[RMDB]
RNA sequence: GGGAACGACUCGAGUAGAGUCGAAAAUUCAACCACAAAAAUCUAGUGCAAAUAUUGUCUUAAUUACUUAGGCUAAAAGAAAUAAGUAUUAAAGCGGGACAAGGCAUCGACAUUUGAUACAAAUAUUUUUAGCAUAUUAGAUUCGUCUAAUAUGCAACGCAUACAAGCAGUUCGCUGCUUGUAUGCGAAAAGAAACAACAACAACAAC
Reactivity to 2A3 in 0.01 (KOAc 150mM, MgCl2 10mM, bicine 150mM(pH8.5), 24C), signal-to-noise 1, nucleotides 027 to 156: u080u050c040a070a050c070c000a070c060a000a100a000a000a000u020c030u050a000g020u000g090c000a040a040a250u070a030u110u000g000u010c010u040u050a120a130u060u040a010c040u010u010a020g020g020c000u140a190a030a060a000g040a160a080a030u040a040a000g040u010a000u000u130a060a080a080g090c110g000g060g000a020c010a010a000g050g000c020a040u080c010g040a040c010a030u060u070u100g030a030u110a120c060a090a150a050u090a090u050u130u030u070u160a000g000c000a000u000a000u000u000a000g000a000u000u070c150g030u000c110u000a000a000u000a000u000g020c010a010a010